This 177-nucleotide RNA was probed chemically with 2A3 and DMS. The reactions ran in a buffer of 150 mM KOAc, 10 mM MgCl2 and 150 mM bicine (pH 8.5), at 24 C. The data come from the RNA Mapping Database (RMDB), libraries RFM100 and RFMREP. Reactivities are given for positions 27 through 126.
RNA sequence: GGGAACGACUCGAGUAGAGUCGAAAAGCCGCCAAGGCCAGGCCGGAAGCCGGCCAGGCCCCGCGCGAAGAAGAGGAAGAAGAGAAGCCGUCGCGCUGAGGACAGCGCAGGUUUCGCCCGCAGACGCUUUAUUAUCCAUGUUCGCAUGGAUAAUAAAAAAAGAAACAACAACAACAAC
Reactivity to 2A3 in 0.01 (KOAc 150mM, MgCl2 10mM, bicine 150mM(pH8.5), 24C), signal-to-noise 6, nucleotides 027 to 126: g040c020c010g000c040c040a040a010g000g000c000c020a010g020g000c000c010g050g060a160a050g210c100c000g000g000c000c000a000g000g000c000c000c000c020g080c010g010c020g040a060a070g060a050a020g050a090g090g030a070a090g030a070a010g060a050g000a050a000g020c020c020g110u240c120g010c010g000c010u010g020a130g120g130a110c030a020g000c000g000c000a000g010g000u000u010u000c010g000c010c000c000g040c030a040g020a130c060g010c070
Reactivity to DMS in 0.01 (KOAc 150mM, MgCl2 10mM, bicine 150mM(pH8.5), 24C), signal-to-noise 7, nucleotides 027 to 126: g000c060c010g040c030c040a210a200g000g030c000c020a010g010g020c010c010g020g020a220a180g020c150c010g020g020c000c020a020g000g010c000c010c050c110g020c110g010c010g020a110a090g000a120a070g010a080g000g010a100a100g000a090a100g000a130g000a020a030g000c010c010g010u030c160g010c020g020c000u000g000a210g020g020a170c050a010g000c010g050c010a100g000g000u000u000u000c010g000c050c010c000g030c090a110g010a090c140g010c110